RNA sequence: GGGAACGACUCGAGUAGAGUCGAAAAGAUAUGGAUACCCAGGAGACAUGCUGCUCGGAAACGAGUCAGCAACAGCUCCGGUAUCCUAAGUCAAACCUUAAGUCAUUCUUCGGAAUGACUUAAGGAAGAUAUAACUGAGCUUCGGCUCAGUUAUAUCAAAAGAAACAACAACAACAAC
Reactivity to DMS in 0.01 (KOAc 150mM, MgCl2 10mM, bicine 150mM(pH8.5), 24C), signal-to-noise 5, nucleotides 027 to 126: g010a040u000a300u010g000g000a010u000a000c010c040c180a220g030g000a000g010a060c080a170u000g010c000u000g000c000u000c010g000g000a070a100a170c000g000a010g010u020c030a000g000c000a010a040c240a140g000c000u000c010c010g000g000u000a000u000c000c000u000a000a050g010u000c030a130a110a230c000c000u010u000a010a000g010u000c000a010u000u000c000u000u020c170g030g000a000a000u000g000a010c000u000u000a000a000g010g010a020a030
Reactivity to 2A3 in 0.01 (KOAc 150mM, MgCl2 10mM, bicine 150mM(pH8.5), 24C), signal-to-noise 5, nucleotides 027 to 126: g020a000u050a030u100g010g000a000u020a030c060c090c120a190g040g010a010g020a050c100a080u060g000c000u010g010c010u010c000g020g000a040a040a020c010g000a010g140u300c050a000g020c000a010a020c060a010g040c000u000c000c000g000g000u000a000u000c000c000u000a070a010g030u020c030a080a030a190c000c000u000u000a000a000g010u000c000a000u000u010c010u030u150c300g170g010a000a010u010g020a010c010u000u000a000a000g000g000a000a030